The data come from the RNA Mapping Database (RMDB), library OK3TST. The record gives the reactivity of an RNA of 207 nucleotides to 2A3 and DMS. Values cover nucleotides 27 to 156. For DMS, 4,774 sequencing reads were counted. Conditions: 150 mM KOAc, 10 mM MgCl2 and 150 mM bicine (pH 8.5), 24 C.

RNA sequence: GGGAACGACUCGAGUAGAGUCGAAAACUGCUAUCCAACCUCUUCAACACUAACAAGACCAGAGCGAUGAACGCCAUGAACAACGAGGUCAAUGCAUGAUGAUGUCCCUGGCGAUGUCGAUCACGUGGUGCUUACCAGACUUCUUAUCGCGAGGUACACAGCUACAUUUUUUCGAAAAUGUAGCUGUAAAAGAAACAACAACAACAAC
Reactivity to 2A3 in 0.01 (KOAc 150mM, MgCl2 10mM, bicine 150mM(pH8.5), 24C), signal-to-noise 6, nucleotides 027 to 156: c030u020g030c010u080a050u080c030c020a040a040c040c000u060c050u140u120c080a130a120c070a060c150u170a200a070c080a160a020g060a060c020c040a040g030a020g110c020g040a040u070g070a120a020c030g020c020c020a040u080g060a060a030c060a040a020c120g020a020g060g000u000c010a030a060u120g010c020a020u080g020a060u080g010a010u050g050u010c030c040c020u020g030g000c020g020a020u030g020u020c010g040a130u130c040a030c130g080u040g010g000u040g050c040u020u050a060c000c020a010g030a030c000u040u010c020u080u140a040u040c000g000c010g030a030g000g000u030a010c010
Reactivity to DMS in 0.01 (KOAc 150mM, MgCl2 10mM, bicine 150mM(pH8.5), 24C), signal-to-noise 3, nucleotides 027 to 156: c020u010g020c040u000a070u000c030c020a140a030c040c000u000c020u000u000c040a080a040c050a160c040u000a100a140c070a100a100g000a100c060c030a100g020a170g020c020g020a140u000g010a030a130c000g000c040c040a060u000g010a050a070c060a110a100c120g000a050g020g010u020c030a080a110u020g020c040a070u000g010a060u020g000a080u010g000u000c030c000c010u020g020g020c000g030a070u000g030u010c000g010a080u000c030a050c090g050u010g000g010u010g020c050u020u010a050c040c030a180g020a070c040u010u000c060u000u000a070u000c080g030c070g000a070g010g000u000a080c180